Chemical mapping of a 177-nucleotide RNA with 2A3 and DMS. For DMS the reverse transcriptase was MarathonRT. For 2A3 the reverse transcriptase was SuperScript II with manganese. The RNA was probed in 150 mM KOAc, 10 mM MgCl2 and 150 mM bicine (pH 8.5) at 24 C.
RNA sequence: GGGAACGACUCGAGUAGAGUCGAAAACGCGGUAUCUGCGUGAUCGCUUCGGUCACUUUGACUUCAGCGGCAUCAAGCUGCGCAACGCCGACCUGACGUUCGACCGCGACCUGGCCAUCGAGCUCGGAAUGCGCUCAAGAUUCGUCUUGAGCGCAUUAAAAGAAACAACAACAACAAC
Reactivity to 2A3 in 0.01 (KOAc 150mM, MgCl2 10mM, bicine 150mM(pH8.5), 24C), signal-to-noise 3, nucleotides 027 to 126: c020g030c010g000g010u030a120u140c080u120g050c040g050u010g030a070u010c020g030c170u170u160c100g020g000u020c010a060c090u160u150u300g020a020c000u030u010c070a010g000c000g020g040c010a030u120c050a060a070g030c070u120g000c050g000c090a070a030c060g000c010c010g040a130c000c070u020g020a020c030g040u060u020c040g050a030c030c020g020c020g020a020c010c030u010g030g000c010c000a130u110c050g010a030g010c020u020c010g000g020
Reactivity to DMS in 0.01 (KOAc 150mM, MgCl2 10mM, bicine 150mM(pH8.5), 24C), signal-to-noise 3, nucleotides 027 to 126: c030g010c000g010g000u000a090u000c090u000g000c110g000u000g000a030u000c020g000c090u010u000c110g030g010u010c000a140c230u010u010u010g030a030c050u000u000c130a040g040c010g000g000c070a080u010c110a100a110g000c020u000g010c070g020c150a110a080c070g020c040c010g010a100c180c100u000g000a030c070g010u000u010c080g020a110c030c010g030c000g030a110c080c020u000g010g010c020c010a060u010c080g000a100g000c060u000c120g000g010